[RMDB]
This 177-nucleotide RNA was probed chemically with DMS and 2A3. It was measured as part of the RMDB libraries RFM100 and RFMREP. For DMS the reverse transcriptase was MarathonRT. The RNA was probed in 150 mM KOAc, 10 mM MgCl2 and 150 mM bicine (pH 8.5) at 24 C.
RNA sequence: GGGAACGACUCGAGUAGAGUCGAAAACACUGUAGAGAAACAGGAAGUGUUGUUUAUUAAUAAGCCUGACCAGGGUCACACCCAAGGUAGUAACCGAGUUUUACUUCUCCUGGUCUUGGGGAGAGGCAGAUUGGUUCUUAUUCGUAAGAACCAAUCUAAAAGAAACAACAACAACAAC
Reactivity to DMS in 0.01 (KOAc 150mM, MgCl2 10mM, bicine 150mM(pH8.5), 24C), signal-to-noise 7, nucleotides 027 to 126: c060a110c010u010g000u000a080g010a170g010a140a090a060c030a040g000g020a110a140g000u000g000u000u000g010u000u000u010a090u040u010a060a100u010a080a170g010c020c000u000g010a050c030c020a010g000g000g010u010c170a070c180a140c040c030c030a070a040g010g020u000a030g010u000a030a050c060c110g010a090g000u010u000u000u000a030c020u000u000c030u010c000c020u000g000g000u010c040u000u010g010g000g010g010a110g000a020g000g020c110
Reactivity to 2A3 in 0.01 (KOAc 150mM, MgCl2 10mM, bicine 150mM(pH8.5), 24C), signal-to-noise 5, nucleotides 027 to 126: c070a010c020u030g020u100a110g060a050g070a250a200a010c020a020g050g090a120a080g050u020g000u050u000g000u010u010u040a150u070u060a100a120u150a150a010g030c010c000u010g020a010c000c030a000g010g010g030u100c080a050c010a050c100c030c010a000a010g050g000u010a020g050u030a040a020c100c170g110a060g050u020u070u010u060a020c010u020u030c020u010c020c010u010g000g040u050c030u050u110g020g000g000g010a070g030a020g050g000c020